[RMDB]
RNA sequence: GGGAACGACUCGAGUAGAGUCGAAAAUCAUGGCCGGCGACGAUGUGGUCUAGCAUCUCCGAGGCGACGAUGAUGCUUGGUUCCGCGGACGGCCGUGCAGGACUAUGCAGCCGCUGGAGGGACGAGAAACCUAUCGCCACUUCGGUGGCGAUAGGUUAAAAGAAACAACAACAACAAC
Reactivity to DMS in 0.01 (KOAc 150mM, MgCl2 10mM, bicine 150mM(pH8.5), 24C), signal-to-noise 1, nucleotides 027 to 126: u000c010a110u000g030g030c000c000g080g000c060g030a180c210g050a110u030g050u000g000g000u000c090u010a110g000c000a020u000c050u010c080c030g000a150g040g020c030g030a090c020g000a040u000g000a020u000g030c000u000u000g020g030u000u000c000c000g000c000g010g010a280c010g010g000c010c000g010u000g010c170a100g000g010a090c040u000a060u020g050c050a160g000c070c030g020c060u000g010g000a220g010g010g000a030c040g030a090g010a030
Overview:
This 177-nucleotide RNA was probed chemically with DMS.